[RMDB]
RNA sequence: GGGAACGACUCGAGUAGAGUCGAAAAGGUGAGCCGGUUUUUGCAAAAGCACGACUUGGAUUUAAUUUGUCGAGCUCACCAAGUCGUCGAAGAUGGUUACGAGUUUUUUGGCAAACGUCAACUGGUACCCAUUAUUAGGAUUCGUCCUAAUAAUGGGAAAAGAAACAACAACAACAAC
Reactivity to DMS in 0.01 (KOAc 150mM, MgCl2 10mM, bicine 150mM(pH8.5), 24C), signal-to-noise 9, nucleotides 027 to 126: g010g020u010g010a080g010c020c030g010g010u000u000u000u010u000g020c110a060a070a090a120g010c100a050c060g010a020c010u000u000g010g010a170u010u010u010a080a120u010u010u000g010u000c050g000a090g010c050u010c070a070c010c010a020a030g000u000c010g010u000c080g010a060a080g010a080u010g000g000u010u000a060c070g000a100g000u000u000u000u000u000u000g010g010c030a030a050a060c220g000u000c070a040a060c050u000g010g020u000a200
Reactivity to 2A3 in 0.01 (KOAc 150mM, MgCl2 10mM, bicine 150mM(pH8.5), 24C), signal-to-noise 9, nucleotides 027 to 126: g040g010u040g020a010g020c020c040g010g030u020u040u010u100u120g050c030a060a060a060a060g020c030a020c050g050a030c040u020u030g010g030a070u170u080u230a140a140u150u130u120g100u070c050g020a040g040c020u010c020a000c000c000a000a000g020u020c010g000u010c030g040a050a020g040a080u120g080g030u100u090a050c060g010a050g040u020u020u020u050u130u120g070g000c040a110a080a050c060g030u060c030a030a020c040u030g060g030u110a090